[RMDB]
The data come from the RNA Mapping Database (RMDB), library OK1LIB. An RNA of 177 nucleotides, treated with 2A3 and DMS and read out base by base. For DMS, 2,288 sequencing reads were counted.
RNA sequence: GGGAACGACUCGAGUAGAGUCGAAAACUAUCAAACAGAUACUAUGCAAUGGUGGGUGACAUUGGAAAGUACAUUGAGAAUUCAGGCCUUACUGCCUUCUUUCUCACCCUCAAAUAUGCACUAGGUAUAACGGAUCACAGUUCGCUGUGAUCCGUUAAAAAGAAACAACAACAACAAC
Reactivity to 2A3 in 0.01 (KOAc 150mM, MgCl2 10mM, bicine 150mM(pH8.5), 24C), signal-to-noise 4, nucleotides 027 to 126: c050u070a030u300c140a090a100a080c090a060g040a050u040a150c030u070a050u040g030c000a010a070u070g030g060u020g060g030g010u030g030a050c080a150u020u180g120g050a060a050a000g030u060a110c030a130u130u210g080a050g080a030a080u210u090c030a080g020g020c010c030u150u130a060c000u080g000c010c000u010u040c000u010u100u000c000u000c000a000c020c000c000u010c010a130a200a030u240a040u050g010c060a040c060u070a000g030g040u030a010
Reactivity to DMS in 0.01 (KOAc 150mM, MgCl2 10mM, bicine 150mM(pH8.5), 24C), signal-to-noise 2, nucleotides 027 to 126: c030u000a090u090c150a000a130a090c180a090g030a170u010a040c030u000a040u000g000c010a030a060u000g040g010u010g000g000g010u000g000a060c140a070u030u010g010g000a020a090a030g020u020a050c170a100u050u000g040a090g010a020a120u030u020c210a070g000g020c050c120u000u000a030c190u010g040c070c000u000u000c110u000u030u000c070u000c000a030c000c010c020u000c000a030a100a070u020a120u010g000c040a050c230u000a040g020g020u000a110